[RMDB]
RNA sequence: GGGAACGACUCGAGUAGAGUCGAAAAGUUCUGCCCCAGUGGUCCAUUACCCCAUGCAAAGUCUGCAUGCAGGCGGGGUAGUGUUCUGCUCGGGCACAACUGGUUGAGAGCUGGGCCGCUCUCCUGAGAUAACAACAAGGUUCGCCUUGUUGUUAUCAAAAGAAACAACAACAACAAC
Reactivity to 2A3 in 0.01 (KOAc 150mM, MgCl2 10mM, bicine 150mM(pH8.5), 24C), signal-to-noise 3, nucleotides 027 to 126: g000u000u010c020u000g000c000c000c000c000a000g010u020g000g000u000c010c010a010u000u010a020c020c010c010c000a010u090g060c030a060a080a110g050u060c080u070g060c060a140u110g030c000a010g080g090c060g000g000g000g010u000a000g000u020g000u000u000c010u010g000c000u000c000g010g010g000c000a010c010a010a000c000u030g080g040u170u180g040a030g000a000g010c020u120g010g200g050c030c030g020c010u020c010u060c000c020u060g040a060
Reactivity to DMS in 0.01 (KOAc 150mM, MgCl2 10mM, bicine 150mM(pH8.5), 24C), signal-to-noise 6, nucleotides 027 to 126: g000u000u000c280u000g010c010c000c000c080a010g050u000g000g000u000c040c010a010u000u000a000c000c000c000c000a200u010g020c160a070a100a210g020u000c050u000g010c060a160u000g010c020a020g010g010c080g010g010g000g010u000a000g020u000g000u000u000c000u000g000c010u000c300g010g000g000c000a000c060a000a000c010u000g010g020u010u010g000a050g000a050g020c030u000g010g000g020c090c080g000c010u000c010u000c000c070u010g000a270